[RMDB]
RNA sequence: GGGAACGACUCGAGUAGAGUCGAAAAUAAAUUGAACGGGUUUGGUUUGAGGUCGUUCCCUGCGGCUGUAUAUUAGACUCCGGUUCCGAAUUCCGGAGUCUAAUAUAUAGCCGCAGGCCGUCUGUUCGCGGACGGAAAAGAAACAACAACAACAAC
Reactivity to DMS in 0.01 (KOAc 150mM, MgCl2 10mM, bicine 150mM(pH8.5), 24C), signal-to-noise 4, nucleotides 027 to 135: u030a040a090a090u020u020g000a060a080c040g000g000g000u000u010u010g010g020u010u010u020g010a090g010g010u000c010g010u000u000c020c000c000u000g010c000g000g000c000u000g000u000a000u000a000u000u000a000g000a010c000u000c000c000g000g000u010u020c210c230g000a140a210u020u020c000c000g000g000a010g000u000c000u010a000a000u000a000u000a000u000a000g010c000c000g000c000a000g000g000c010c010g000u000c020u000g010u010u020c140g020c060g000g000a090c090g000g000a100